[RMDB]
RNA sequence: GGGAACGACUCGAGUAGAGUCGAAAAGAUAUGGAGUCCUUCGAGACAUGUAUGGGAGUCGGAAACGACUUUAUACAACAGCUCGAGGACUCCUAAGUCAAAUCAGCUGUUCUUCGGAACAGCUGAAGUCACAACUACAGUUCGCUGUAGUUGUGACAAAAGAAACAACAACAACAAC
Reactivity to 2A3 in 0.01 (KOAc 150mM, MgCl2 10mM, bicine 150mM(pH8.5), 24C), signal-to-noise 2, nucleotides 027 to 126: g020a020u010a040u080g010g010a000g020u010c040c010u140u300c080g020a020g040a050c210a250u230g020u000a010u010g300g100g010a020g010u000c010g000g020a030a010a000c000g010a000c000u000u020u040a020u000a010c090a280a090c120a180g000c000u000c000g000a000g000g000a000c000u000c000c000u000a000a010g000u000c010a020a030a260u020c000a000g000c000u000g000u010u000c000u030u060c300g200g010a000a000c000a010g000c000u000g000a000a000
Reactivity to DMS in 0.01 (KOAc 150mM, MgCl2 10mM, bicine 150mM(pH8.5), 24C), signal-to-noise 2, nucleotides 027 to 126: g010a010u010a250u000g010g010a000g010u000c010c010u020u000c000g020a030g020a060c100a130u000g030u000a020u000g040g040g010a010g000u000c000g010g000a060a040a110c000g000a030c000u000u000u000a020u000a010c000a090a090c210a160g000c000u000c000g000a020g010g000a010c000u000c000c000u000a000a100g000u000c010a210a150a240u010c000a010g000c000u000g000u000u000c000u000u020c290g000g000a010a010c000a000g010c000u000g000a000a050
Record summary:
Source: RMDB library TTRDES, as collected in RNAgym. This 177-nucleotide RNA was probed chemically with 2A3 and DMS. DMS adducts were read by reverse transcription with MarathonRT. The reactions ran in a buffer of 150 mM KOAc, 10 mM MgCl2 and 150 mM bicine (pH 8.5), at 24 C.